[RMDB]
RNA sequence: GGGAACGACUCGAGUAGAGUCGAAAAGAAAGGGAACGAAUCGAGUAGAGUCGAAAAGACGCUCAACUCAUGGAGCGCAAGACGAAUAGCUACAUAUUCGACAUGAGGGCGCCGUUCAAGAAGGAGAACGCUAAUCAUCAUUCGUGAUGAUUAGCGUAAAAGAAACAACAACAACAAC
Reactivity to 2A3 in 0.01 (KOAc 150mM, MgCl2 10mM, bicine 150mM(pH8.5), 24C), signal-to-noise 4, nucleotides 027 to 126: g080a010a050a030g050g010g000a050a000c020g020a020a180u090c030g000a000g000u050a020g030a010g020u040c030g060a030a100a020a010g030a020c000g000c000u030c020a010a040c010u020c030a030u110g050g030a080g020c060g000c100a030a020g070a020c000g010a000a030u030a030g060c060u130a060c070a100u060a090u050u030c010g020a040c020a040u060g000a040g030g030g000c020g000c000c010g010u040u030c030a060a020g050a030a040g070g070a040g050a070
Reactivity to DMS in 0.01 (KOAc 150mM, MgCl2 10mM, bicine 150mM(pH8.5), 24C), signal-to-noise 4, nucleotides 027 to 126: g010a070a040a070g010g000g000a080a110c060g020a070a050u010c080g000a030g000u010a060g000a080g000u010c020g010a110a060a110a100g010a120c070g000c020u000c030a040a070c050u000c050a030u010g010g010a060g040c040g030c070a060a050g010a110c020g020a030a030u020a030g000c170u020a070c160a130u010a050u010u000c010g010a120c050a040u040g000a040g000g000g000c040g010c030c010g000u010u000c070a050a050g000a170a060g000g010a150g030a080

Chemical mapping of a 177-nucleotide RNA with 2A3 and DMS. The reactions ran in a buffer of 150 mM KOAc, 10 mM MgCl2 and 150 mM bicine (pH 8.5), at 24 C. The 2A3 profile rests on 3,973 reads. The data come from the RNA Mapping Database (RMDB), library OK1LIB.